[RMDB]
RNA sequence: GGGAACGACUCGAGUAGAGUCGAAAAAGAUAAAGUGGACUUGUCUAGUGCCAGGUCUGUGCCAGGAAGCUCACAUUCAAUGCUCAGGCCACCCUGGGAGGUGGGUGCUAUUAUCCCCAUGGGGCAGAUAAGGAAACUGAGAUGGGAAAGUGCCCAAACCCUCAAAAUAUUUCGAUAUUUUGAGGGUAAAAGAAACAACAACAACAAC
Reactivity to DMS in 0.01 (KOAc 150mM, MgCl2 10mM, bicine 150mM(pH8.5), 24C), signal-to-noise 1, nucleotides 027 to 156: a100g010a220u000a000a050a110g010u000g010g010a230c030u030u000g000u000c030u000a120g050u000g000c080c030a120g060g020u010c030u010g000u020g020c040c130a200g030g020a120a060g000c030u000c110a110c060a110u000u000c080a100a120u000g000c010u000c010a100g010g020c010c040a030c040c010c010u000g000g010g000a090g030g010u000g020g010g050u010g000c100u020a130u000u000a040u000c010c010c010c010a180u010g020g000g020g010c010a030g000a070u010a100a100g020g010a210a170a090c050u020g000a100g020a150u000g020g030g010a080a080a120g020u000g010c000c030c000a010a100
Reactivity to 2A3 in 0.01 (KOAc 150mM, MgCl2 10mM, bicine 150mM(pH8.5), 24C), signal-to-noise 2, nucleotides 027 to 156: a000g080a010u190a050a110a060g040u010g040g030a010c010u030u030g030u030c020u010a080g070u060g150c040c030a020g000g060u060c000u000g000u020g050c020c000a010g080g060a050a000g040c050u060c130a120c000a070u110u080c040a070a000u080g010c000u000c050a000g030g030c060c020a010c000c010c010u040g010g020g010a050g000g110u060g020g030g020u050g000c000u010a060u240u020a080u160c010c000c000c000a040u080g020g000g010g000c010a020g000a040u060a060a000g020g010a000a000a040c070u050g000a030g020a110u080g000g000g030a090a150a000g030u130g060c110c040c120a060a130
The record gives the reactivity of an RNA of 207 nucleotides to DMS and 2A3.
For 2A3 the reverse transcriptase was SuperScript II with manganese.
DMS (dimethyl sulfate) methylates the pairing face of unpaired adenines and cytosines.
Reactivities are given for positions 27 through 156.
The RNA was probed in 150 mM KOAc, 10 mM MgCl2 and 150 mM bicine (pH 8.5) at 24 C.